[RMDB]
RNA sequence: GGGAACGACUCGAGUAGAGUCGAAAAGGGGGCGAUCGGUUUCGACGGGGGUCGCGAAAUCGCCUGGAGCAUGCCGAGGGCGUCAUCUUCCUCGUUAAUCCGGUGGCAAAAAACUCAGACGCCAACGACGACGUCUACGCUGUAGCCGCUUAAGGCUUCUACGUGGUAUGUUCGCAUACCACGUAGAAAAAGAAACAACAACAACAAC
Reactivity to 2A3 in 0.01 (KOAc 150mM, MgCl2 10mM, bicine 150mM(pH8.5), 24C), signal-to-noise 1, nucleotides 027 to 156: g020g020g000g000g000c000g010a020u020c010g020g000u050u020u090c100g000a000c010g000g000g020g000g010u080c030g000c010g080a010a030a060u090c030g000c010c020u020g040g000a090g060c060a040u050g080c040c000g020a060g010g000g000c000g020u050c010a070u000c000u110u130c000c000u010c020g080u050u020a050a010u000c000c000g000g010u020g010g000c000a000a000a000a000a000a140c130u180c030a020g000a040c010g000c000c030a050a020c100g140a040c080g000a000c000g000u000c010u050a030c060g000c070u070g040u090a020g000c000c010g000c050u070u120a040a090g000g010c000u030
The record gives the reactivity of an RNA of 207 nucleotides to 2A3. The reactions ran in a buffer of 150 mM KOAc, 10 mM MgCl2 and 150 mM bicine (pH 8.5), at 24 C.